An RNA of 207 nucleotides, treated with 2A3 and read out base by base. Source: RMDB library M2RFPK, as collected in RNAgym. 2A3 adducts were read by reverse transcription with SuperScript II with manganese. Values cover nucleotides 27 to 156.
RNA sequence: GGGAACGACUCGAGUAGAGUCGAAAAUAACCCCUAUACUUGUAUGGGCGAUUAAUAAAUCUUCUGUAAAUGCUGUAAGAGGAUUACCCCUUGAGGUUUCAGCACUAGGCUGCUCUAGCGAUUAAUCACAACGAUUUGGUCUUCGGACCAAAUCGAACAGAUAACGAGACUUCGGUCUCGUUAUCUGAAAAGAAACAACAACAACAAC
Reactivity to 2A3 in 0.01 (KOAc 150mM, MgCl2 10mM, bicine 150mM(pH8.5), 24C), signal-to-noise 1, nucleotides 027 to 156: u050a020a070c010c030c000c010u080a030u070a140c100u180u100g040u090a050u060g020g010g040c040g020a040u060u010a090a050u100a150a140a080u010c000u040u000c000u050g160u300a130a210a210u120g020c000u050g130u110a050a010g010a000g020g010a000u000u090a050c000c000c000c030u000u060g060a110g020g000u020u170u180c010a000g000c010a020c020u010a040g180g000c000u000g020c000u120c110u050a030g060c000g000a000u060u180a060a070u150c000a050c010a210a110c030g000a000u020u000u000g000g030u000c020u000u110c170g010g040a000c030c000a000a000a000u000c000g000a060a000